Chemical mapping of a 177-nucleotide RNA with 2A3 and DMS. Source: RMDB library TTRDES, as collected in RNAgym. The 2A3 profile rests on 8,139 reads. Conditions: 150 mM KOAc, 10 mM MgCl2 and 150 mM bicine (pH 8.5), 24 C. Reactivities are given for positions 27 through 126. Values are in units of 0.01, from 0 to 300, in steps of 10. For DMS the reverse transcriptase was MarathonRT.

[RMDB]
RNA sequence: GGGAACGACUCGAGUAGAGUCGAAAAGAUAUGGAGUUCACUGGAGCUCUGUAUCGGAAACGAUACAAGAGCGAUGAAAGUGAAACUCCUAAGUCAAACACACAAAGCGGUUCGCCGCUUUGUGUGAUCAAGAGAUAGUGUUCGCACUAUCUCUUGAAAAAGAAACAACAACAACAAC
Reactivity to 2A3 in 0.01 (KOAc 150mM, MgCl2 10mM, bicine 150mM(pH8.5), 24C), signal-to-noise 2, nucleotides 027 to 126: g000a000u020a010u040g000g000a000g000u000u010c000a000c010u000g030g000a000g010c000u000c000u000g000u010a000u010c000g000g000a000a000a000c000g000a000u000a000c030a090a200g020a010g000c020g200a300u010g000a000a000a000g020u030g020a110a030a030c000u020c000c000u000a000a000g010u000c000a000a150a000c000a000c000a000c010a000a010a010g000c020g020g100u130u250c300g080c140c000g000c000u000u000u010g010u010g000u000g010a020
Reactivity to DMS in 0.01 (KOAc 150mM, MgCl2 10mM, bicine 150mM(pH8.5), 24C), signal-to-noise 3, nucleotides 027 to 126: g000a020u000a000u020g000g010a020g010u000u000c000a010c020u000g000g000a010g010c010u000c000u000g000u000a000u000c000g020g000a010a000a010c010g020a010u000a010c010a040a080g000a020g020c000g000a130u020g010a130a190a040g010u000g000a030a000a040c010u000c000c000u010a000a070g000u000c010a170a150a300c010a000c000a010c000a000a010a000g010c010g020g000u010u020c300g010c000c000g010c000u000u010u000g010u000g010u000g000a060